[RMDB]
RNA sequence: GGGAACGACUCGAGUAGAGUCGAAAAUAAUUAAAAGGGCCUAUAAAUACAACACCUAGAGAGUCAGGCUUUUAACACAUUUGUUCCUUUUGCUUCAAUUCCAGAUUGCCUCCAAUGAAGAGAGGGACAAUAGAAAGGACUUCGGUCCUUUCUAUUGAAAAGAAACAACAACAACAAC
Reactivity to DMS in 0.01 (KOAc 150mM, MgCl2 10mM, bicine 150mM(pH8.5), 24C), signal-to-noise 2, nucleotides 027 to 126: u000a070a140u000u030a070a030a100a140g010g010g010c030c010u010a200u000a070a060a070u030a090c130a100a080c110a090c030c030u010a100g030a110g000a070g010u020c090a030g010g000c050u000u020u030u000a030a080c140a070c160a100u010u010u000g000u010u000c010c000u000u020u000u000g020c050u000u000c020a010a140u000u000c050c050a070g000a100u010u010g030c020c010u000c010c040a060a150u020g030a040a090g010a070g030a010g000g010g010a100

Structure probing data (DMS) for a 177-nucleotide construct. Reactivities are rounded to 0.1 and cut off at 0 and 3. Reactivities are given for positions 27 through 126. Source: RMDB library OK2TST, as collected in RNAgym. For DMS, 889 sequencing reads were counted.